[RMDB]
RNA sequence: GGGAACGACUCGAGUAGAGUCGAAAAUAAUACUUGCUCCAGCGUUGUCUAUUCAUUAUAACUUUAUUCAGCUUCUCUAAUAUGGCAUACAAAAAGCAUUGCACAUCUAAGUACAUGGGCAUCAAUCCCUCAGUAGGGUGAAGGUACAUCCAUUGAAACAUCUCCCAAAUUUCGAUUUGGGAGAUGUAAAAGAAACAACAACAACAAC
Reactivity to DMS in 0.01 (KOAc 150mM, MgCl2 10mM, bicine 150mM(pH8.5), 24C), signal-to-noise 1, nucleotides 027 to 156: u010a070a110u010a070c050u010u020g000c040u000c020c030a140g020c060g020u000u000g010u000c000u010a150u010u000c050a080u000u030a110u000a100a210c070u000u000u000a110u040u020c110a040g040c020u000u000c030u000c030u000a050a110u000a070u010g000g000c050a140u010a150c060a060a020a080a070a060g030c010a090u010u000g050c000a070c000a120u000c040u000a050a120g060u000a070c020a060u000g010g000g030c010a040u000c070a070a120u000c000c030c010u000c050a060g030u000a100g010g040g030u000g010a070a050g000g030u000a100c000a130u000c030c010a200u010u000g010a180a190
Reactivity to 2A3 in 0.01 (KOAc 150mM, MgCl2 10mM, bicine 150mM(pH8.5), 24C), signal-to-noise 3, nucleotides 027 to 156: u110a000a030u070a010c020u020u060g000c000u020c060c020a020g010c030g070u020u050g060u040c030u140a140u170u040c070a080u070u250a160u100a210a090c080u160u160u080a090u110u140c040a030g000c000u070u010c030u020c030u070a050a110u080a130u160g030g000c020a020u040a120c080a100a180a010a010a010g070c090a050u050u060g050c040a010c010a100u060c050u080a120a000g010u030a050c050a130u030g010g060g050c000a000u020c020a040a190u060c040c020c010u020c070a180g070u190a030g010g010g000u010g030a060a000g020g010u010a020c010a000u010c000c040a020u010u120g020a110a140

Source: RMDB library OK3TST, as collected in RNAgym. This 207-nucleotide RNA was probed chemically with DMS and 2A3. For 2A3, 931 sequencing reads were counted. For DMS the reverse transcriptase was MarathonRT. The reactions ran in a buffer of 150 mM KOAc, 10 mM MgCl2 and 150 mM bicine (pH 8.5), at 24 C.